[RMDB]
RNA sequence: GGGAACGACUCGAGUAGAGUCGAAAAGAAAACUAUGCAGCCAUAAAAAAGAGCAAGAUCAUGUCUUUUGCAGGAACAUGAAUAGAGCUGGAGGCCAUUAUGCUUAACCAACUAUGUCGGUAACAGAGAAUCAAAUACUGCAUGUUCUCACUUAUAACUAAAAUGCUGCAUUCGUGCAGCAUUUUAGAAAAGAAACAACAACAACAAC
Reactivity to DMS in 0.01 (KOAc 150mM, MgCl2 10mM, bicine 150mM(pH8.5), 24C), signal-to-noise 1, nucleotides 027 to 156: g000a050a050a090a090c040u010a050u000g010c000a040g040c000c080a060u020a010a060a050a070a100a070g010a090g050c020a080a030g030a160u000c040a050u030g020u000c050u000u010u000u000g020c090a120g010g000a060a050c010a030u000g040a060a120u000a150g000a130g050c070u020g000g010a140g000g000c010c050a170u000u010a080u000g040c000u000u000a120a090c020c040a010a080c030u000a050u000g050u010c040g020g020u010a050a090c050a130g000a130g000a080a080u010c040a080a050a140u010a080c040u000g000c010a020u000g030u010u000c010u000c110a090c050u000u000a090u020a120a120
Reactivity to 2A3 in 0.01 (KOAc 150mM, MgCl2 10mM, bicine 150mM(pH8.5), 24C), signal-to-noise 2, nucleotides 027 to 156: g030a000a060a010a010c010u030a040u070g010c010a010g040c030c020a060u160a070a100a020a020a000a010g070a010g000c030a080a020g010a040u060c030a030u020g020u020c010u010u130u100u060g000c030a070g050g000a060a020c010a000u050g030a100a030u080a030g090a000g050c030u010g040g010a040g090g040c020c000a030u070u070a040u140g020c000u050u030a090a060c010c000a000a040c020u060a050u110g130u180c050g040g000u030a030a030c010a030g040a010g060a050a060u100c060a040a020a100u060a100c000u010g010c000a030u020g010u000u010c050u040c010a010c060u090u190a160u040a270a000

The record gives the reactivity of an RNA of 207 nucleotides to DMS and 2A3.
It was measured as part of the RMDB library OK3TST.
For 2A3 the reverse transcriptase was SuperScript II with manganese.
For DMS the reverse transcriptase was MarathonRT.